About this RNA: Structure probing data (2A3 and DMS) for a 177-nucleotide construct. DMS adducts were read by reverse transcription with MarathonRT. It was measured as part of the RMDB library OK2TRN.
RNA sequence: GGGAACGACUCGAGUAGAGUCGAAAAUUCAAAGGCUGUUCUUCCUAGCAAUCAGGAACUCAGCUGGGGCUGGCAGCAGCAGGGCCAGAGAGACCAAAACUCACUUCCAGCCAAAAUUGGGUGGGCACAUACCCCUCUAUUUCGAUAGAGGGGUAUGAAAAGAAACAACAACAACAAC
Reactivity to 2A3 in 0.01 (KOAc 150mM, MgCl2 10mM, bicine 150mM(pH8.5), 24C), signal-to-noise 3, nucleotides 027 to 126: u100u010c020a080a010a010g020g000c010u030g040u090u060c030u080u020c000c010u010a070g090c090a080a200u250c050a040g000g010a010a010c020u000c050a000g000c010u010g030g010g020g010c030u020g000g030c010a020g010c010a010g040c060a040g040g030g020c010c000a020g010a000g000a000g020a070c050c000a030a030a060a090c030u020c020a020c000u110u000c020c000a040g070c000c040a100a070a060a140u170u060g030g000g000u020g030g020g000c050a010
Reactivity to DMS in 0.01 (KOAc 150mM, MgCl2 10mM, bicine 150mM(pH8.5), 24C), signal-to-noise 7, nucleotides 027 to 126: u020u010c070a050a230a190g000g010c010u000g000u010u010c110u000u000c010c000u000a120g030c190a120a100u000c120a030g010g000a020a040c090u000c020a060g020c000u000g000g000g010g010c030u000g010g000c060a030g010c060a070g010c090a060g000g010g000c030c030a060g010a290g000a070g000a110c060c040a070a060a110a140c050u000c030a040c060u000u000c020c010a020g000c040c040a090a060a080a090u000u010g010g010g000u000g000g010g010c200a170